[RMDB]
RNA sequence: GGGAACGACUCGAGUAGAGUCGAAAAGCCCAUUUCUUCGGAAAUGGGCAAACGCUCAACUCAUGGAGCGCACCACGGAUCACCAUCGAUUCGACAUGAGAAAAACGGGGCGGUUCGCCGCCCCGAACUUCAUGAACUUGUUCGCAAGUUCAUGAAGAAAAGAAACAACAACAACAAC
Reactivity to DMS in 0.01 (KOAc 150mM, MgCl2 10mM, bicine 150mM(pH8.5), 24C), signal-to-noise 2, nucleotides 027 to 126: g010c000c000c000a010u000u000u010c010u010u010c180g070g000a020a010a020u020g000g010g020c000a000a070a100c030g030c010u000c000a140a120c000u010c000a000u000g010g000a000g000c010g020c090a210c030c010a110c040g000g000a010u000c010a070c180c270a110u010c120g000a070u000u000c000g000a280c030a010u000g000a040g000a140a130a040a110a130c020g000g020g010g020c010g010g060u000u010c140g010c000c010g040c000c010c000c000g000a000a010
Reactivity to 2A3 in 0.01 (KOAc 150mM, MgCl2 10mM, bicine 150mM(pH8.5), 24C), signal-to-noise 2, nucleotides 027 to 126: g000c010c000c010a020u010u000u000c020u030u040c150g130g000a020a000a000u000g010g010g000c020a020a000a000c000g010c000u000c000a030a060c030u020c000a010u010g010g000a010g000c010g040c070a070c030c010a060c030g010g010a010u020c020a060c210c080a150u280c170g010a010u000u010c010g040a010c000a000u040g000a010g030a040a080a000a000a010c030g000g000g000g000c000g030g050u030u030c260g010c070c000g000c000c010c000c010g000a000a000